The data come from the RNA Mapping Database (RMDB), library OK1LIB. Structure probing data (2A3 and DMS) for a 177-nucleotide construct.
[RMDB]
RNA sequence: GGGAACGACUCGAGUAGAGUCGAAAACCCGCCCUUGGAAAAAGCUACAGCCUGUCUCGAGGUGCAGAGAGACUUCGCGACUCUUUGUUUCUUUGAAAAGAGAAGAGCUCCAAACCGGCGGUCAGAGCUAUUUUAUGCCUUUCGAGGCAUAAAAUAGAAAAGAAACAACAACAACAAC
Reactivity to 2A3 in 0.01 (KOAc 150mM, MgCl2 10mM, bicine 150mM(pH8.5), 24C), signal-to-noise 8, nucleotides 027 to 126: c010c000c000g010c010c010c010u030u030g030g050a080a100a050a050a010g030c030u070a090c030a050g040c010c020u120g050u120c020u020c060g040a020g000g030u040g020c030a010g030a000g000a010g010a060c020u060u040c170g050c100g090a060c000u010c000u010u020u040g040u040u190u020c030u040u060u130g120a130a110a030a010g040a000g010a060a020g020a020g010c020u000c010c000a040a050a120c050c010g010g000c010g020g020u030c060a030g010a010g120
Reactivity to DMS in 0.01 (KOAc 150mM, MgCl2 10mM, bicine 150mM(pH8.5), 24C), signal-to-noise 3, nucleotides 027 to 126: c080c010c010g000c020c040c080u010u000g020g010a030a070a080a110a100g000c000u000a080c120a080g000c070c010u010g000u030c080u020c050g010a040g000g010u010g000c010a040g000a060g000a040g030a090c010u010u050c110g010c130g020a060c000u000c010u000u000u000g010u010u010u000c000u010u020u010g010a060a070a180a040g000a040g010a110a070g000a090g010c030u000c010c020a040a100a050c120c200g010g000c020g010g000u010c150a030g000a110g000
Record summary
The reactions ran in a buffer of 150 mM KOAc, 10 mM MgCl2 and 150 mM bicine (pH 8.5), at 24 C.